[RMDB]
RNA sequence: GGGAACGACUCGAGUAGAGUCGAAAAGAUGGAGACUUCGGUCUCCAUCAAAACAGGACGUGGAGCCGGCUUCGCGGCGCACGACGAUGACGCCCCGGCCGGAAAUCCUUAGGUUCGCCUAAGGAAAGAAAAUCGUAAGAUUCGUCUUACGAUUUUCAAAAGAAACAACAACAACAAC
Reactivity to 2A3 in 0.01 (KOAc 150mM, MgCl2 10mM, bicine 150mM(pH8.5), 24C), signal-to-noise 3, nucleotides 027 to 126: g000a000u010g010g000a020g010a010c020u060u060c270g020g010u000c000u000c000c000a000u000c000a000a000a000a010c030a010g040g120a020c050g100u120g060g100a050g070c010c000g020g020c050u220u190c090g020c060g020g000c020g010c040a010c030g250a040c090g300a300u050g070a120c000g030c020c000c010c000g020g010c010c000g000g000a030a050a010u010c000c000u000u020a020g020g000u010u020c180g060c030c000u010a000a010g020g000a010a070a020
Reactivity to DMS in 0.01 (KOAc 150mM, MgCl2 10mM, bicine 150mM(pH8.5), 24C), signal-to-noise 5, nucleotides 027 to 126: g010a010u000g010g000a010g010a020c000u000u020c190g040g000u000c000u000c000c000a000u000c000a010a050a070a140c120a080g000g010a090c130g010u010g000g000a150g000c020c010g000g000c030u000u010c060g050c280g020g000c010g000c020a050c040g010a100c220g000a120u000g000a150c030g010c010c000c040c040g000g010c010c000g000g010a050a080a090u010c010c000u010u010a010g000g010u000u010c230g020c000c000u000a000a020g000g010a030a080a100
Structure probing data (2A3 and DMS) for a 177-nucleotide construct. For 2A3 the reverse transcriptase was SuperScript II with manganese. The reactions ran in a buffer of 150 mM KOAc, 10 mM MgCl2 and 150 mM bicine (pH 8.5), at 24 C.